Description
Source: RMDB library OK1LIB, as collected in RNAgym. The record gives the reactivity of an RNA of 177 nucleotides to DMS. The reactions ran in a buffer of 150 mM KOAc, 10 mM MgCl2 and 150 mM bicine (pH 8.5), at 24 C. Reactivities are given for positions 27 through 126.
RNA sequence: GGGAACGACUCGAGUAGAGUCGAAAAAGGCUAGACGGCCUGGAGAUAUUUCAGCCUGGAAAUGAGUGUAUGGGGUGUAUCAUGCAGGAAUCUCGAUAACGCUACGAAUCAUUACAGGUUGUGUGCCGAUUUUAGGGGCUUUCGAGCCCCUAAAAUCAAAAGAAACAACAACAACAAC
Reactivity to DMS in 0.01 (KOAc 150mM, MgCl2 10mM, bicine 150mM(pH8.5), 24C), signal-to-noise 1, nucleotides 027 to 126: a010g000g020c040u000a020g010a160c160g010g000c030c000u000g000g000a180g000a080u040a020u000u000u010c000a000g000c000c000u000g000g000a070a030a030u000g010a010g000u020g040u020a060u030g000g000g000g000u020g030u010a080u000c000a050u010g040c200a090g000g000a070a150u010c000u000c050g030a050u000a070a080c100g030c040u010a040c000g000a070a190u000c000a020u000u000a110c010a000g000g000u000u000g000u000g000u020g000c030c020